[RMDB]
RNA sequence: GGGAACGACUCGAGUAGAGUCGAAAAGAAUAUAAAGCGCGAGGGACCAAUUGCGAGCGACCUCGCGCCACCAGCUGGCGACUCACCAAGCGCGCAGCCAGCUGGAGGUUACGCUCGCAAGAGAAGACCAUAGGUCAUAGUUCGCUAUGACCUAUGGAAAAGAAACAACAACAACAAC
Reactivity to DMS in 0.01 (KOAc 150mM, MgCl2 10mM, bicine 150mM(pH8.5), 24C), signal-to-noise 3, nucleotides 027 to 126: g000a120a130u090a120u020a070a160a190g010c010g030c010g010a010g000g000g030a190c110c060a150a090u030u020g050c000g010a000g000c000g010a020c000c010u000c000g000c030g000c000c010a010c010c010a020g000c000u000g030g010c000g020a210c120u020c090a120c080c090a110a150g020c100g020c110g010c190a230g030c010c000a020g000c000u000g000g000a010g000g030u010u040a090c070g000c000u000c010g010c000a010a070g000a100g000a130a100g000a180
Reactivity to 2A3 in 0.01 (KOAc 150mM, MgCl2 10mM, bicine 150mM(pH8.5), 24C), signal-to-noise 7, nucleotides 027 to 126: g020a050a020u250a020u100a170a090a020g000c000g000c000g000a010g000g020g030a060c050c060a110a270u080u070g000c000g000a000g000c000g000a020c000c000u000c000g000c000g000c000c000a020c000c000a000g000c000u000g000g000c020g080a100c020u030c090a130c070c050a120a050g080c040g000c030g000c100a020g000c000c000a000g000c000u000g000g000a020g010g020u100u100a020c020g000c000u000c000g000c000a000a000g000a000g000a080a030g050a040
Annotation:
Source: RMDB library OK1LIB, as collected in RNAgym. Structure probing data (DMS and 2A3) for a 177-nucleotide construct. For DMS, 5,394 sequencing reads were counted. The 2A3 profile rests on 11,471 reads. For DMS the reverse transcriptase was MarathonRT. Values cover nucleotides 27 to 126. Conditions: 150 mM KOAc, 10 mM MgCl2 and 150 mM bicine (pH 8.5), 24 C.